[RMDB]
RNA sequence: GGGAACGACUCGAGUAGAGUCGAAAAGCAAAGAGUCAAAAAAAUAGAGAGCUUUGCGAGACCUACCAAGGGUGAAGAGAUACCAUCCAAGGAGCUGAAGAGAAAUCACACUUUAGACGCCUGGGGAAAAAGACCCUUUCGUUCGCGAAAGGGUCAACCUAUAACCUAACUUCGGUUAGGUUAUAGGAAAAGAAACAACAACAACAAC
Reactivity to 2A3 in 0.01 (KOAc 150mM, MgCl2 10mM, bicine 150mM(pH8.5), 24C), signal-to-noise 1, nucleotides 027 to 156: g050c000a000a010a000g010a040g090u070c050a050a130a180a210a100a050a030u300a070g100a000g020a010g030c040u000u020u010g020c010g000a020g040a040c010c000u010a010c070c030a070a150g000g000g010u040g060a100a100g040a040g010a080u070a180c030c030a020u040c010c000a020a030g050g000a020g040c030u000g010a030a000g040a030g100a120a090a050u160c000a010c010a030c050u110u060u050a050g070a110c080g120c070c050u050g000g010g000g060a030a000a000a000a030g010a010c000c010c000u010u030u000c020g010u020u040c200g010c010g070a020a000a020g000g000g010u000c000a000a000